[RMDB]
RNA sequence: GGGAACGACUCGAGUAGAGUCGAAAACGGAAGCAUUAAAACCAUUCGAGCUAGGCAAUGCGUGGCGUGUCUCUCCGCAGCGUGUUGGCGAAUGUAAAGAGUGACUAAGCAUGUAGUACCGAGGAUGAUAAGAGCAAUUCGUUCGCGAAUUGCUCAAGUUAUUCCAUAGCUUCGGCUAUGGAAUAACAAAAGAAACAACAACAACAAC
Reactivity to 2A3 in 0.01 (KOAc 150mM, MgCl2 10mM, bicine 150mM(pH8.5), 24C), signal-to-noise 7, nucleotides 027 to 156: c030g040g040a050a000g030c050a050u090u150a080a050a010a090c040c010a030u050u070c060g030a030g060c070u120a050g090g060c010a020a020u040g000c010g020u040g040g000c030g000u070g040u020c020u000c010u000c070c000g000c010a010g010c010g000u030g030u030u010g080g030c030g030a060a030u080g010u120a030a050a040g040a010g010u040g010a010c030u040a040a030g010c020a040u070g030u110a050g030u040a060c030c070g010a040g060g010a030u070g010a010u100a180a100g000a000g000c000a000a000u000u000c010g020u030u060c180g000c010g110a000a000u000u000g000c000u000c000a000a000
Reactivity to DMS in 0.01 (KOAc 150mM, MgCl2 10mM, bicine 150mM(pH8.5), 24C), signal-to-noise 3, nucleotides 027 to 156: c050g010g010a170a120g020c040a080u000u000a080a110a100a120c070c010a090u000u000c010g010a230g010c070u000a120g020g030c040a050a040u000g030c040g010u010g010g030c040g030u000g010u000c070u000c050u010c140c020g010c030a050g020c030g040u000g040u000u000g000g000c030g020a040a030u000g020u010a050a050a140g000a080g010u000g020a100c010u000a080a110g000c010a040u000g010u000a070g020u000a110c010c020g010a100g020g020a080u000g000a100u000a070a170g000a010g010c010a010a040u000u000c000g040u000u000c300g010c000g000a020a020u010u010g010c000u000c000a000a050
Conditions: 150 mM KOAc, 10 mM MgCl2 and 150 mM bicine (pH 8.5), 24 C. This 207-nucleotide RNA was probed chemically with 2A3 and DMS. The data come from the RNA Mapping Database (RMDB), library M2RFPK. For DMS the reverse transcriptase was MarathonRT.